[RMDB]
RNA sequence: GGGAACGACUCGAGUAGAGUCGAAAAAAAAAAGAUAUGGAUAUGCUAUCAGCACCUGAACUACAGAGCGAGUCGGAAACGACUCGACUCUGCAGGUGCGACGACGGCAUAUCCUAAGUCAAAAAAACCAUUCUUAAGAGUUCGCUCUUAAGAAUGGAAAAGAAACAACAACAACAAC
Reactivity to DMS in 0.01 (KOAc 150mM, MgCl2 10mM, bicine 150mM(pH8.5), 24C), signal-to-noise 1, nucleotides 027 to 126: a000a010a100a160a050a030g000a010u000a260u020g010g000a010u000a000u000g010c010u000a070u000c000a070g010c010a000c000c000u010g000a050a000c060u000a300c010a000g000a010g000c000g010a000g020u010c000g020g000a050a010a080c010g020a000c000u000c000g000a060c000u000c000u000g010c000a010g000g000u000g010c010g020a060c170g010a000c010g000g020c000a000u000a000u000c000c000u000a000a060g000u010c000a000a000a030a100a090a070a090
Chemical mapping of a 177-nucleotide RNA with DMS. DMS adducts were read by reverse transcription with MarathonRT. The RNA was probed in 150 mM KOAc, 10 mM MgCl2 and 150 mM bicine (pH 8.5) at 24 C. Values cover nucleotides 27 to 126.